[RMDB]
RNA sequence: GGGAACGACUCGAGUAGAGUCGAAAAGGAAGCCGUAAUGGCAGGAAGCGGACGAACGGCGGCAUAGGGAAACGUGAUUCAACCUGGGGCCCAUGAAAAGACGAGCAUGAUGUCCGUACCGAGAACCGACACAGGUGUCCAUGGCGGCGAAAGCCAACAGAUUCUACUUCUUCGGAAGUAGAAUCUGAAAAGAAACAACAACAACAAC
Reactivity to DMS in 0.01 (KOAc 150mM, MgCl2 10mM, bicine 150mM(pH8.5), 24C), signal-to-noise 2, nucleotides 027 to 156: g010g040a080a200g020c000c040g080u000a030a060u010g010g020c050a080g050g010a110a130g000c000g020g000a070c060g000a110a090c050g000g020c070g030g030c000a060u000a100g010g000g000a060a040a120c070g000u010g000a180u000u000c120a070a080c050c010u000g000g000g020g000c030c050c040a060u010g000a060a080a100a130g020a100c050g000a160g000c070a060u000g000a130u020g000u000c000c010g050u000a090c030c060g000a160g000a110a040c050c020g000a110c120a180c040a080g010g020u000g010u020c010c020a060u000g020g010c080g000g020c050g010a040a090a120g010c000c020a020a200
Reactivity to 2A3 in 0.01 (KOAc 150mM, MgCl2 10mM, bicine 150mM(pH8.5), 24C), signal-to-noise 3, nucleotides 027 to 156: g070g020a070a040g010c020c010g020u060a070a000u060g010g000c070a020g000g010a100a070g060c010g000g060a030c040g010a190a050c040g040g030c020g010g010c030a080u130a200g070g010g000a080a080a020c060g060u070g090a120u120u080c080a070a070c030c030u040g000g000g080g050c020c000c010a040u060g050a020a060a050a000g100a030c070g010a020g050c040a030u030g020a060u170g040u000c000c000g000u010a040c000c010g050a080g040a090a040c030c010g130a060c060a030c020a250g000g040u000g020u040c020c010a000u020g070g000c030g000g000c020g030a080a000a000g060c010c000a010a020

Source: RMDB library PDB130, as collected in RNAgym. Structure probing data (DMS and 2A3) for a 207-nucleotide construct. Reactivities are given for positions 27 through 156. For 2A3 the reverse transcriptase was SuperScript II with manganese.